Structure probing data (2A3) for a 207-nucleotide construct. For 2A3 the reverse transcriptase was SuperScript II with manganese. The RNA was probed in 150 mM KOAc, 10 mM MgCl2 and 150 mM bicine (pH 8.5) at 24 C. It was measured as part of the RMDB library M2RFPK.
RNA sequence: GGGAACGACUCGAGUAGAGUCGAAAAAGGUGCAUGCCGAGGUGCGGUAGGCCUCGUUAACAAACUGCAAAAAAAUAGUCGCAAACGACGAAAACUACGCACUCGCAGCUUAAUAACCUGCGCUGAGAAAACCCGACUACCUUCGGGUAGUCGGGAACACUACCAAACGCUUCGGCGUUUGGUAGUGAAAAGAAACAACAACAACAAC
Reactivity to 2A3 in 0.01 (KOAc 150mM, MgCl2 10mM, bicine 150mM(pH8.5), 24C), signal-to-noise 2, nucleotides 027 to 156: a000g090g000u070g060c060a140u080g030c110c040g020a070g010g090u030g040c080g030g060u040a010g020g000c030c010u010c000g030u040u070a120a090c060a060a080a070c070u070g010c050a080a040a020a000a000a000a140u190a100g050u070c050g030c070a030a030a050c060g030a000c050g050a010a010a060a030c010u010a000c000g010c020a010c020u010c030g010c000a020g010c010u100u010a060a060u040a130a080c000c000u040g000c020g020c070u030g050a060g110a110a070a050a050c000c000c000g010a000c000u000a000c000c000u010u030c260g060g020g000u000a000g000u000c000g020g000g000a000a000